[RMDB]
RNA sequence: GGGAACGACUCGAGUAGAGUCGAAAACAAAAACCAUUCAACGCCGAAGGACUGGCUCUCAUCCAGUGGAUGCAUUGAGUGAAUUGAUUGUCAGGGCUGUCUCUAGGUUUAAUCCCAGACCUCUCUGUUGCAUCUCCAAUUUCGAUUGGAGAUGCAAAAAAGAAACAACAACAACAAC
Reactivity to DMS in 0.01 (KOAc 150mM, MgCl2 10mM, bicine 150mM(pH8.5), 24C), signal-to-noise 2, nucleotides 027 to 126: c070a030a070a110a070a040c130c000a060u030u000c030a030a010c110g000c000c140g020a210a100g020g000a010c010u000g000g000c150u030c140u000c170a110u000c010c010a080g000u010g000g000a140u010g010c010a040u010u000g000a040g000u000g000a100a070u030u010g010a140u030u000g000u040c040a050g010g000g020c300u000g020u000c030u000c030u010a060g010g010u000u000u050a090a080u010c030c000c020a100g000a050c030c000u000c010u010c040u000g000
Reactivity to 2A3 in 0.01 (KOAc 150mM, MgCl2 10mM, bicine 150mM(pH8.5), 24C), signal-to-noise 3, nucleotides 027 to 126: c040a000a110a000a010a010c030c000a000u000u010c010a030a030c020g000c050c010g110a160a030g150g060a000c030u040g000g000c050u050c040u050c070a120u070c000c000a040g050u060g070g060a060u080g000c060a060u020u070g000a010g010u090g040a090a140u060u060g120a160u130u060g080u120c030a020g050g020g000c030u030g040u060c010u010c000u040a010g000g010u070u040u030a020a020u000c000c000c000a000g010a010c000c000u040c010u000c000u050g020